[RMDB]
RNA sequence: GGGAACGACUCGAGUAGAGUCGAAAAGACUGCGACGUUGAUGGCGAGCCCGCCGGCCGAGGUUUCCUUGUACUUGGUGUGCAUGUCCGCGCCGGUGGCGCGCAUGGUGUCGAUGACCUGGUCGAGGAAUCAACGCUGUUUUCGAACAGCGUUGAUUAAAAGAAACAACAACAACAAC
Reactivity to DMS in 0.01 (KOAc 150mM, MgCl2 10mM, bicine 150mM(pH8.5), 24C), signal-to-noise 2, nucleotides 027 to 126: g000a050c060u020g020c060g000a060c020g000u000u010g000a050u020g000g000c030g030a110g030c080c030c050g020c030c000g000g050c020c090g000a060g010g010u060u000u020c220c040u010u020g020u020a000c040u000u060g010g020u010g010u000g010c000a010u010g000u010c030c000g010c120g000c010c000g010g050u020g010g000c060g030c000g030c010a040u010g000g000u000g000u000c040g000a080u000g010a120c020c020u000g030g030u000c000g000a070g010g010
Reactivity to 2A3 in 0.01 (KOAc 150mM, MgCl2 10mM, bicine 150mM(pH8.5), 24C), signal-to-noise 3, nucleotides 027 to 126: g040a010c050u070g010c000g000a010c020g060u020u070g280a070u120g050g030c020g010a040g040c020c000c030g020c000c000g000g000c030c050g030a170g050g000u030u120u140c010c010u040u010g000u010a040c010u060u170g270g040u110g120u010g060c020a000u030g000u020c040c020g000c000g000c040c000g010g000u000g010g000c010g000c010g010c010a000u080g020g020u040g000u050c010g020a030u090g080a050c000c050u030g040g000u060c020g020a090g070g100

This 177-nucleotide RNA was probed chemically with DMS and 2A3. 2A3 is a SHAPE reagent: it acylates the 2'-hydroxyl of flexible nucleotides of all four kinds. Conditions: 150 mM KOAc, 10 mM MgCl2 and 150 mM bicine (pH 8.5), 24 C.